Chemical mapping of a 177-nucleotide RNA with 2A3.
The reactions ran in a buffer of 150 mM KOAc, 10 mM MgCl2 and 150 mM bicine (pH 8.5), at 24 C.

RNA sequence: GGGAACGACUCGAGUAGAGUCGAAAAACGCGGUGGCUUACGAGCCACCGCGAAACUCACUGAUGAGUAGCUUCUAACUUUCAUUCUUCUGAGUUUGCUGAACCCAGAUGCCAUUCCUGGGAAGGAAUAGGGAACUUUAGUUCGCUAAAGUUCCCUAAAAAGAAACAACAACAACAAC
Reactivity to 2A3 in 0.01 (KOAc 150mM, MgCl2 10mM, bicine 150mM(pH8.5), 24C), signal-to-noise 2, nucleotides 027 to 126: a000c000g040c000g030g010u050g050g050c020u110u160a110c300g040a040g000c000c030a000c000c010g000c000g000a010a010a010c000u040c020a000c010u040g000a030u050g000a060g080u200a020g030c040u160u170c060u300a140a110c040u070u030u050c020a100u140u100c000u140u070c000u030g040a030g110u030u050u080g040c080u120g030a050a060c000c000c000a010g040a120u160g020c010c000a100u040u020c010c000u040g050g100g000a060a020g020g020a080a110